[RMDB]
RNA sequence: GGGAACGACUCGAGUAGAGUCGAAAAAGAUCAAGGUGGACAUAGCAUCAGCCGGGCACUGGUUUGGCGGAGGCCACCUCAUGCGCCAGCUGUGGCCACUGAACCGCGCCUCGCUGGAGACAGGCCCUCAAAUAGGAUCCUUCGGGAUCCUAUUUGAAAAAGAAACAACAACAACAAC
Reactivity to 2A3 in 0.01 (KOAc 150mM, MgCl2 10mM, bicine 150mM(pH8.5), 24C), signal-to-noise 2, nucleotides 027 to 126: a000g080a050u150c050a040a060g050g000u030g040g040a020c030a100u140a040g050c010a070u100c020a030g060c030c040g040g010g010c040a060c170u240g070g080u060u010u050g080g000c080g060g120a060g060g020c000c000a010c010c010u020c010a070u100g010c020g070c080c040a020g000c070u060g010u040g090g000c000c000a030c040u040g020a020a010c030c020g000c010g000c040c000u000c010g000c010u030g030g010a020g010a030c030a000g000g090c000c010c000
Reactivity to DMS in 0.01 (KOAc 150mM, MgCl2 10mM, bicine 150mM(pH8.5), 24C), signal-to-noise 5, nucleotides 027 to 126: a100g010a150u000c050a110a080g010g020u000g000g000a100c050a080u010a110g020c080a110u010c030a030g000c050c060g020g010g000c020a050c060u000g020g010u000u000u000g000g010c060g020g020a120g020g000c020c010a030c050c110u000c040a060u010g010c090g020c060c050a070g020c070u010g020u000g000g010c010c020a110c100u010g000a040a060c090c080g010c120g000c000c010u000c290g000c010u010g010g000a050g000a070c080a100g010g000c010c010c040